An RNA of 177 nucleotides, treated with 2A3 and DMS and read out base by base. The RNA was probed in 150 mM KOAc, 10 mM MgCl2 and 150 mM bicine (pH 8.5) at 24 C. The DMS profile rests on 868 reads. Reactivities are given for positions 27 through 126.
RNA sequence: GGGAACGACUCGAGUAGAGUCGAAAAGAUUCUAUGUUCGCAUAGAAUCAAAGAACGCCGAAGCGGAGAGCGCAAGAUGGAGGAGACGGCGAACCACCAAAAAAACAGCGGUCUUCGGACCGCUGAAACUCAAUACCUUCUUCGGAAGGUAUUGAGUAAAAGAAACAACAACAACAAC
Reactivity to 2A3 in 0.01 (KOAc 150mM, MgCl2 10mM, bicine 150mM(pH8.5), 24C), signal-to-noise 1, nucleotides 027 to 126: g020a000u010u000c010u000a000u000g030u030u030c160g000c130a000u000a010g000a020a000u000c010a000a000a000g030a090a000c050g040c050c030g080a090a020g070c010g060g030a060g000a040g200c030g000c050a040a020g090a150u160g020g030a050g040g000a040g000a020c040g000g030c020g030a000a010c030c010a040c010c020a030a070a030a030a030a000a130c020a020g000c000g000g000u010c000u020u050c170g110g010a000c040c000g030c000u000g000a010a010
Reactivity to DMS in 0.01 (KOAc 150mM, MgCl2 10mM, bicine 150mM(pH8.5), 24C), signal-to-noise 2, nucleotides 027 to 126: g020a030u000u000c000u020a010u000g010u010u050c200g030c000a000u010a000g000a030a000u000c000a050a130a060g020a110a130c080g000c050c000g020a120a030g040c040g070g010a100g010a200g000c130g020c130a100a060g000a090u030g000g010a110g000g010a110g010a150c070g000g040c030g000a090a120c030c050a110c070c060a010a010a120a020a050a110a170c010a000g010c000g010g010u000c000u000u000c160g020g060a000c000c000g000c010u000g000a010a050